[RMDB]
RNA sequence: GGGAACGACUCGAGUAGAGUCGAAAAUUUAAUGCAGUUGCAAGGGAUGCGGGUCCGCAGCUGUAGCUGUCUCCAGCCAUCACUACACCUUCGGUGUCUUUAGCUUCCUCUUCAAUAAUCUCGCUAAGCACGCCUACCUAUUCGUAGGUAGGCGUGCAAAAGAAACAACAACAACAAC
Reactivity to 2A3 in 0.01 (KOAc 150mM, MgCl2 10mM, bicine 150mM(pH8.5), 24C), signal-to-noise 1, nucleotides 027 to 126: u170u120u140a090a070u110g040c090a000g020u030u000g040c040a100a140g060g040g000a030u020g000c000g010g000g050u000c030c010g100c040a040g000c000u000g000u030a100g030c000u000g040u100c000u090c030c000a000g010c000c000a020u080c000a030c100u220a040c060a060c020c020u190u240c160g080g000u020g000u020c000u000u080u150a040g000c000u050u000c000c000u020c000u050u000c000a020a240u200a130a090u060c000u000c000g040c040u090a060a060

Conditions: 150 mM KOAc, 10 mM MgCl2 and 150 mM bicine (pH 8.5), 24 C. This 177-nucleotide RNA was probed chemically with 2A3. 2A3 adducts were read by reverse transcription with SuperScript II with manganese. The 2A3 profile rests on 430 reads.